[RMDB]
RNA sequence: GGGAACGACUCGAGUAGAGUCGAAAACUCGUGGUUCCUGUGGUUCACACCUGACCUCCUGAGCAGAAAAGAAAAAAGAAGGCGGCUCGGAGGAGCGCUUCAGGGAUCCCCGGGGAAACCUGGAGCGGUACGAUUUAUACUUCGGUAUAAAUCGUACAAAAGAAACAACAACAACAAC
Reactivity to DMS in 0.01 (KOAc 150mM, MgCl2 10mM, bicine 150mM(pH8.5), 24C), signal-to-noise 1, nucleotides 027 to 126: c040u010c040g040u010g000g010u000u000c000c010u000g010u010g000g010u010u000c100a050c070a090c060c040u000g020a160c030c010u000c010c000u040g040a010g030c010a100g000a110a030a060a150g010a030a070a020a080a090a150g010a140a110g010g020c070g040g000c020u000c000g020g000a020g010g000a060g010c020g020c020u000u000c010a000g010g010g000a210u000c000c010c020c150g000g000g010g000a040a070a170c000c020u000g000g000a000g000c030g010
Reactivity to 2A3 in 0.01 (KOAc 150mM, MgCl2 10mM, bicine 150mM(pH8.5), 24C), signal-to-noise 2, nucleotides 027 to 126: c020u000c020g040u060g040g040u030u030c020c010u070g060u100g070g020u120u130c080a090c020a030c160c020u060g110a130c000c000u020c010c050u140g000a010g000c030a000g170a050a190a050a000g120a030a240a080a090a030a020g090a090a050g140g090c140g040g000c040u010c010g020g000a010g030g020a010g050c040g000c000u040u000c010a000g020g010g010a000u000c010c000c000c020g180g050g010g000a040a010a030c000c000u000g000g000a010g000c020g000

Chemical mapping of a 177-nucleotide RNA with DMS and 2A3. It was measured as part of the RMDB library VIROID. The DMS profile rests on 854 reads.